[RMDB]
RNA sequence: GGGAACGACUCGAGUAGAGUCGAAAAGUGCAGCAAGAUCGGUCUAUUUGUAUGAACAACCCUUUAUUGGAUAUUUCUGAUGGGUUUUUUACCUACAUACAUUAUGAAGGAAUAAAUAGCUGUAAAAUGAUAAUGCACAAUUCGUUGUGCAUUAUCAAAAAGAAACAACAACAACAAC
Reactivity to 2A3 in 0.01 (KOAc 150mM, MgCl2 10mM, bicine 150mM(pH8.5), 24C), signal-to-noise 2, nucleotides 027 to 126: g020u030g000c000a010g000c020a010a000g050a190u050c070g130g100u010c020u030a080u050u090u060g010u000a020u000g030a030a020c020a000a010c000c000c010u090u190u120a070u050u060g000g000a020u030a160u150u300u010c010u020g050a010u010g030g020g010u010u010u000u000u050u080a070c010c000u010a020c000a000u020a000c000a020u010u040a060u220g030a050a000g030g000a010a000u040a040a080a020u080a080g000c000u010g010u060a100a050a030a000
Reactivity to DMS in 0.01 (KOAc 150mM, MgCl2 10mM, bicine 150mM(pH8.5), 24C), signal-to-noise 4, nucleotides 027 to 126: g000u010g020c000a010g010c010a110a100g010a100u000c050g010g000u000c010u000a110u000u000u000g000u000a020u010g010a150a100c210a020a010c020c000c010u010u010u010a060u020u010g010g000a100u000a080u010u020u000c020u010g000a030u000g000g000g000u000u000u010u010u010u020a090c200c080u020a140c010a020u000a040c040a040u000u000a060u010g000a060a040g000g000a090a090u010a060a070a080u010a110g010c030u000g000u000a020a030a060a100
Chemical mapping of a 177-nucleotide RNA with 2A3 and DMS. Values cover nucleotides 27 to 126. The RNA was probed in 150 mM KOAc, 10 mM MgCl2 and 150 mM bicine (pH 8.5) at 24 C. The DMS profile rests on 3,484 reads.